Background
Source: RMDB libraries RFM100 and RFMREP, as collected in RNAgym. Structure probing data (2A3 and DMS) for a 177-nucleotide construct.
RNA sequence: GGGAACGACUCGAGUAGAGUCGAAAAUACCUGUUGUCUUAGAAAUAAGACUACAGCACAUGAUGAUUGAAUUCUAUGAAUACGUGAUUAUAUUCUGUAUUCUUAAAGGGUUUGCAACACCUUUAUGCUCGUCCUAUGAUUUCGAUCAUAGGACGAGAAAAGAAACAACAACAACAAC
Reactivity to 2A3 in 0.01 (KOAc 150mM, MgCl2 10mM, bicine 150mM(pH8.5), 24C), signal-to-noise 4, nucleotides 027 to 126: u100a010c000c010u000g000u010u010g000u000c000u000u000a030g060a050a100a040u020a060a030g000a000c000u000a000c010a020g100c080a040c010a140u240g040a130u100g040a080u110u090g070a100a110u130u000c070u080a060u080g020a010a000u010a020c090g120u050g030a010u010u200a130u090a090u300u040c000u000g000u000a000u000u000c000u000u050a090a060a000g040g010g020u030u050u120g070c020a030a020c010a100c010c000u000u050u010a140u210g040
Reactivity to DMS in 0.01 (KOAc 150mM, MgCl2 10mM, bicine 150mM(pH8.5), 24C), signal-to-noise 2, nucleotides 027 to 126: u010a140c210c000u020g010u000u000g020u000c000u000u000a050g010a090a110a160u000a000a030g000a040c000u000a020c010a010g000c200a100c180a100u010g000a070u020g000a160u020u000g000a050a050u000u000c050u020a070u010g000a000a000u000a000c000g010u020g000a010u000u010a160u030a040u000u010c000u000g010u000a010u000u000c000u000u000a090a070a040g000g000g000u000u020u010g000c150a050a060c130a060c050c000u000u000u030a040u020g020